[RMDB]
RNA sequence: GGGAACGACUCGAGUAGAGUCGAAAACAGUCAACGUGAAGGCGGGCCAGACCAUCGCCGCAUUCUACCAGAGCACCGUCAUGAUCUUUGGCACGAUGGCUCGCUACAUGCUUAGAGUUAGGGAAAACACUAUCCCGUCCUUCGGGACGGGAUAGUGAAAAGAAACAACAACAACAAC
Reactivity to DMS in 0.01 (KOAc 150mM, MgCl2 10mM, bicine 150mM(pH8.5), 24C), signal-to-noise 2, nucleotides 027 to 126: c060a110g010u030c060a110a070c060g010u010g020a120a060g000g000c000g070g000g000c010c010a140g010a120c150c100a110u000c060g030c050c070g030c100a010u000u030c050u000a040c050c020a020g010a040g000c090a040c030c030g000u020c150a100u000g000a050u000c020u000u000u000g000g000c070a040c100g010a190u010g020g000c020u000c020g000c000u000a090c080a010u000g000c140u020u000a070g060a080g030u000u000a130g010g030g010a090a060a030a130
Reactivity to 2A3 in 0.01 (KOAc 150mM, MgCl2 10mM, bicine 150mM(pH8.5), 24C), signal-to-noise 1, nucleotides 027 to 126: c040a000g170u120c030a010a020c080g020u040g170a170a120g040g020c040g000g000g040c000c000a060g070a090c020c000a070u030c050g020c020c010g100c050a020u130u040c040u110a090c020c010a060g000a000g120c030a030c010c060g100u060c000a120u200g070a110u120c020u130u090u110g020g000c030a060c080g000a050u020g000g030c000u020c000g000c000u020a000c010a010u070g040c060u080u090a040g010a020g040u050u030a050g000g050g000a130a030a000a000
The record gives the reactivity of an RNA of 177 nucleotides to DMS and 2A3.
The RNA was probed in 150 mM KOAc, 10 mM MgCl2 and 150 mM bicine (pH 8.5) at 24 C.
The data come from the RNA Mapping Database (RMDB), library OK2TRN.
For 2A3 the reverse transcriptase was SuperScript II with manganese.
The DMS profile rests on 1,285 reads.